[RMDB]
RNA sequence: GGGAACGACUCGAGUAGAGUCGAAAAGAUAUGGACCAGGUACGAGCUGAUGACCUCGGAAACGAGCAAGGCUGGUACUGGUCCUAAGUCAAACUUGAUCCUUAACGUUCGCGUUAAGGAUCAAGAACUUUAAUCAAGUCUUCGGACUUGAUUAAAGAAAAGAAACAACAACAACAAC
Reactivity to DMS in 0.01 (KOAc 150mM, MgCl2 10mM, bicine 150mM(pH8.5), 24C), signal-to-noise 6, nucleotides 027 to 126: g000a040u000a300u010g000g000a010c000c000a030g010g020u000a010c000g010a020g000c000u010g010a120u010g000a080c300c010u010c000g000g000a110a110a200c010g000a010g020c020a060a130g000g010c000u010g010g010u000a010c000u000g000g000u000c000c000u000a000a040g000u000c030a090a090a230c000u000u000g010a000u000c000c000u000u010a010a010c000g010u000u010c230g020c010g010u000u000a000a000g000g000a010u000c000a000a010g000a050a150
Reactivity to 2A3 in 0.01 (KOAc 150mM, MgCl2 10mM, bicine 150mM(pH8.5), 24C), signal-to-noise 5, nucleotides 027 to 126: g030a000u070a040u130g010g000a020c010c030a020g180g110u080a030c080g130a060g000c010u040g040a300u180g060a270c010c020u020c010g010g040a070a090a010c010g000a000g000c030a100a120g010g000c010u090g090g000u010a020c000u000g000g000u000c000c000u000a020a010g030u000c010a050a060a090c000u000u000g000a000u010c010c010u000u010a000a000c010g040u060u070c300g000c000g150u000u000a000a000g000g000a000u000c000a000a000g000a000a000